RNA sequence: GGGAACGACUCGAGUAGAGUCGAAAAGGGCACGCAUGUCCAAAUCGGUGACCAUCGACGAUGCCCAUGCGGCCAUCGAGCUGGUACAGUUUGCCUACUUUAAGAAGGUGCUGGAUAAGGAUCGCCCGUGCACAUACUCCUUCGGGAGUAUGUGCACAAAAGAAACAACAACAACAAC
Reactivity to DMS in 0.01 (KOAc 150mM, MgCl2 10mM, bicine 150mM(pH8.5), 24C), signal-to-noise 3, nucleotides 027 to 126: g010g000g000c010a080c200g030c120a090u010g020u010c020c000a020a160a100u000c030g010g040u000g040a070c080c050a040u000c050g010a090c050g020a090u010g010c090c010c030a070u020g020c090g080g020c100c030a030u000c010g000a170g000c210u000g000g000u000a060c050a110g010u010u020u040g040c030c000u020a050c080u010u000u000a100a090g000a110a030g040g000u000g000c060u020g010g010a110u000a100a210g000g000a050u000c100g010c020c010c010
Reactivity to 2A3 in 0.01 (KOAc 150mM, MgCl2 10mM, bicine 150mM(pH8.5), 24C), signal-to-noise 3, nucleotides 027 to 126: g020g000g010c060a040c170g070c100a110u100g000u010c010c010a030a010a100u120c090g020g060u130g070a050c020c010a040u070c040g150a200c050g010a070u050g000c000c010c010a010u120g030c160g060g000c070c010a000u030c020g020a020g010c020u040g020g000u070a070c010a040g000u040u180u210g000c000c000u050a090c060u160u220u130a200a070g060a040a020g000g050u050g070c000u000g000g100a160u040a120a050g020g000a040u020c030g040c030c030c000